[RMDB]
The record gives the reactivity of an RNA of 177 nucleotides to DMS and 2A3. For 2A3 the reverse transcriptase was SuperScript II with manganese. The DMS profile rests on 6,316 reads. Conditions: 150 mM KOAc, 10 mM MgCl2 and 150 mM bicine (pH 8.5), 24 C. Values are in units of 0.01, from 0 to 300, in steps of 10. Values cover nucleotides 27 to 126.

RNA sequence: GGGAACGACUCGAGUAGAGUCGAAAAGCUGGUAGAUCGCGGCGUCUGUCCUUUUGCCCAGAAGGAAGACGCAGCCGCGCAGCGCGGUGCGGUGGCGCUGAUCAUUGCUGACAACAUCGACGAGCAGACAACUAGCUGUUUUCGAACAGCUAGUUGUAAAAGAAACAACAACAACAAC
Reactivity to DMS in 0.01 (KOAc 150mM, MgCl2 10mM, bicine 150mM(pH8.5), 24C), signal-to-noise 3, nucleotides 027 to 126: g000c020u000g010g030u000a080g010a040u000c060g030c030g010g030c020g010u000c000u000g010u010c000c010u000u010u000u040g010c010c010c020a230g010a020a020g000g000a300a020g010a030c010g050c060a090g030c000c010g020c000g000c080a050g010c070g000c080g010g000u010g000c010g000g000u000g000g000c040g020c060u000g010a070u010c060a110u020u010g010c000u010g000a140c150a070a130c050a090u000c030g000a030c070g000a060g040c040a160g000
Reactivity to 2A3 in 0.01 (KOAc 150mM, MgCl2 10mM, bicine 150mM(pH8.5), 24C), signal-to-noise 7, nucleotides 027 to 126: g030c030u050g010g080u080a040g010a140u070c030g000c020g030g020c010g020u000c010u060g300u090c000c000u020u000u040u090g100c000c000c000a010g010a000a000g000g000a010a000g000a000c000g000c020a010g000c000c010g020c020g000c040a040g040c030g010c040g070g010u080g030c020g000g050u020g060g000c030g000c040u060g020a020u030c030a040u040u160g010c030u040g020a040c030a120a030c010a150u090c030g090a100c030g040a050g040c020a010g030